[RMDB]
RNA sequence: GGGAACGACUCGAGUAGAGUCGAAAAUCAAGACCAGCCACAUAGCGAGACCCUCUCUCAACAACAAAUAAAAAAUAAAUUAGCCAGGUGUGGUGGUGCUCACCUGUAGUUCCAGCUACUCGGAGGCUGAGGUGGGAGGAUUGCCUGAGCCCAGGAGACCAGGAUGAAUUUUCGAAUUCAUCCUGGUAAAAGAAACAACAACAACAAC
Reactivity to 2A3 in 0.01 (KOAc 150mM, MgCl2 10mM, bicine 150mM(pH8.5), 24C), signal-to-noise 1, nucleotides 027 to 156: u030c030a040a000g020a040c020c000a010g000c000c000a040c000a040u130a020g020c040g030a070g020a040c000c020c000u070c000u020c010u070c040a000a140c030a080a050c120a160a050a100u300a120a170a060a040a000a010u270a050a040a010u100u070a060g040c020c000a040g070g000u100g000u060g030g000u030g000g000u010g010c010u020c010a010c000c030u040g070u090a000g050u080u070c020c020a000g040c010u080a050c000u020c090g000g020a030g020g030c020u000g030a000g000g000u000g050g010g000a010g000g040a160u010u140g000c000c000u010g030a030g020c000c000c040a010g110g030a060g070
Conditions: 150 mM KOAc, 10 mM MgCl2 and 150 mM bicine (pH 8.5), 24 C. An RNA of 207 nucleotides, treated with 2A3 and read out base by base. 2A3 adducts were read by reverse transcription with SuperScript II with manganese. The 2A3 profile rests on 474 reads.